[RMDB]
An RNA of 207 nucleotides, treated with 2A3 and read out base by base. The RNA was probed in 150 mM KOAc, 10 mM MgCl2 and 150 mM bicine (pH 8.5) at 24 C. Reactivities are rounded to 0.1 and cut off at 0 and 3.
RNA sequence: GGGAACGACUCGAGUAGAGUCGAAAAGGAUGGUACUAAACCAUUCAUGAGGAAUCCACUCCCAUCAUCCAGUCACCUCCCGCCAAGCUCUACCUCCAACUUUGGGUAUUACAAUUCGACACAUUAGAUUAGGGAGAGGUAAACAUCCGAACUAUAAGACGUCGUCCUACUUCGGUAGGACGACGUCAAAAGAAACAACAACAACAAC
Reactivity to 2A3 in 0.01 (KOAc 150mM, MgCl2 10mM, bicine 150mM(pH8.5), 24C), signal-to-noise 1, nucleotides 027 to 156: g020g000a000u000g000g040u100a170c120u300a140a070a100c030c000a000u020u000c000a000u100g040a000g010g050a040a000u010c030c030a050c070u070c060c000c000a070u050c000a040u000c070c020a060g200u160c000a010c090c000u060c000c000c020g010c000c040a080a000g000c030u000c010u040a020c020c040u120c060c000a070a040c010u010u190u100g030g010g000u050a040u000u240a070c000a050a150u060u180c000g090a120c020a000c000a130u000u180a080g030a060u040u020a040g040g000g000a000g000a000g060g000u020a000a000a190c070a020u020c010c020g140a000a040c040u120a050u120a210a110